[RMDB]
RNA sequence: GGGAACGACUCGAGUAGAGUCGAAAACUUUCCAGUUGCCGGAUCUUACCCAAGCGGGGAAUUCAUCGAUGGUCAUGCCAUCGAUGCCAGCGGCCCCUUUAUUGGCUCGAACGCGUUUCCAUGCCGCAGAAGAGUCCAAAUUCGUUUGGACUCUUCUAAAAGAAACAACAACAACAAC
Reactivity to 2A3 in 0.01 (KOAc 150mM, MgCl2 10mM, bicine 150mM(pH8.5), 24C), signal-to-noise 1, nucleotides 027 to 126: c050u250u180u070c070c040a060g050u020u020g100c070c000g000g090a050u000c000u060u170a090c020c010c000a000a050g050c060g040g010g040g020a040a070u140u080c000a000u000c000g000a010u030g010g020u060c100a090u300g060c000c000a000u000c000g020a000u010g010c000c000a060g010c040g040g010c030c010c010c010u080u160u080a170u090u060g020g000c040u000c010g040a070a000c080g000c010g080u040u000u000c020c010a020u140g070c030c080g000c030
Reactivity to DMS in 0.01 (KOAc 150mM, MgCl2 10mM, bicine 150mM(pH8.5), 24C), signal-to-noise 3, nucleotides 027 to 126: c090u000u000u020c170c080a070g030u000u020g030c300c020g000g000a080u010c050u000u010a140c090c000c040a080a100g010c300g000g010g000g000a130a150u010u010c010a000u000c010g030a010u000g010g000u000c210a220u040g000c000c020a000u000c000g000a000u000g000c120c170a070g020c090g010g000c030c010c000c020u000u000u010a120u010u000g000g020c020u000c020g010a040a090c150g030c030g000u000u000u010c000c020a100u010g040c120c030g020c160